[RMDB]
RNA sequence: GGGAACGACUCGAGUAGAGUCGAAAAGAUUAUGUGGGAGAUGCGCCCAGUCGUGUCACUGGAAACAGAAUUGCGAGUCGCUCGCCCUAGCGAUAUUGAUGUGUACUGUAGCGUACACUGUGCUACUUUAAGGUAUCAUGACGAUACCACGUCAAAAAUGAUUUUAGCAUUUCGAUGCUAAAAUCAUAAAAGAAACAACAACAACAAC
Reactivity to 2A3 in 0.01 (KOAc 150mM, MgCl2 10mM, bicine 150mM(pH8.5), 24C), signal-to-noise 6, nucleotides 027 to 156: g050a040u160u140a050u220g060u080g010g040g010a100g010a050u080g020c020g020c020c030c040a020g040u070c060g030u030g040u060c030a020c050u020g030g000a060a070a020c040a040g080a140a110u110u170g030c030g010a000g050u010c010g010c020u030c040g080c020c010c000u000a010g000c010g050a020u030a090u170u190g080a080u050g030u010g030u040a030c040u060g060u220a030g050c030g040u020a020c040a010c060u070g070u070g000c000u020a030c000u060u080u120a100a040g010g000u010a010u020c050a060u150g110a020c090g010a010u000a010c000c000a010c030g040u040c040a050a060a030a020
Reactivity to DMS in 0.01 (KOAc 150mM, MgCl2 10mM, bicine 150mM(pH8.5), 24C), signal-to-noise 3, nucleotides 027 to 156: g010a140u000u010a040u000g030u000g000g010g010a120g010a090u000g000c050g020c150c040c050a070g020u000c000g040u000g010u010c060a090c000u000g000g000a150a130a230c070a090g000a060a110u000u000g020c030g010a090g020u000c010g040c000u000c040g000c010c010c030u000a070g010c030g020a080u000a100u000u020g020a070u000g000u000g010u040a040c010u000g010u000a070g000c070g000u000a070c060a050c050u000g050u010g000c020u000a050c040u010u000u010a090a110g010g000u010a030u000c010a200u000g020a220c160g000a050u000a040c010c020a050c080g000u000c060a020a070a110a150

Chemical mapping of a 207-nucleotide RNA with 2A3 and DMS. Reactivities are rounded to 0.1 and cut off at 0 and 3. For 2A3 the reverse transcriptase was SuperScript II with manganese. Reactivities are given for positions 27 through 156.